Notes
An RNA of 207 nucleotides, treated with 2A3 and DMS and read out base by base. The 2A3 profile rests on 1,583 reads. Source: RMDB library OK3TST, as collected in RNAgym. For DMS, 4,570 sequencing reads were counted.

[RMDB]
RNA sequence: GGGAACGACUCGAGUAGAGUCGAAAAUAGAUCUAAGGAUGAUGAGAGAAAACUAGCACUACGAUUCUUUUUACAAAGACUUUAUUUUUUAGAUCAUAGAGAGAUUCAUUAUUUGUUCAGAUGCGUCGACGCUGUAAAAGACGUCACUAUUACCAAAUGAUAUAAUUGGUUUCGACCAAUUAUAUCAAAAAGAAACAACAACAACAAC
Reactivity to 2A3 in 0.01 (KOAc 150mM, MgCl2 10mM, bicine 150mM(pH8.5), 24C), signal-to-noise 3, nucleotides 027 to 156: u050a010g010a010u000c020u030a080a170g000g000a020u000g000a000u090g020a020g010a010g000a020a010a020a010c010u020a010g020c020a020c070u050a040c080g100a140u120u100c010u090u160u080u140u140a080c060a020a110a050g040a040c000u130u130u090a140u080u160u050u020u090u150a030g000a030u060c020a030u140a010g030a000g000a010g020a050u060u040c010a010u010u170a050u110u050u070g080u040u030c030a030g040a120u070g020c000g030u060c050g010a020c030g010c070u060g030u070a020a110a000a000g020a020c020g010u010c000a010c060u080a100u100u090a060c000c050a050a070a110
Reactivity to DMS in 0.01 (KOAc 150mM, MgCl2 10mM, bicine 150mM(pH8.5), 24C), signal-to-noise 2, nucleotides 027 to 156: u010a070g030a010u000c010u010a100a170g020g010a060u010g000a230u000g010a080g000a170g000a050a010a050a060c040u000a070g030c020a090c050u000a070c060g010a130u010u010c010u000u000u030u010u010a090c070a070a070a130g000a070c060u000u010u010a020u000u000u000u000u000u000a100g000a030u000c020a100u010a110g000a130g000a080g010a070u000u010c050a070u000u000a090u010u010u010g010u000u000c040a160g000a120u000g020c080g000u000c050g040a050c020g040c010u000g030u010a070a110a070a270g010a030c010g010u000c010a090c060u000a080u010u010a100c040c050a060a060a130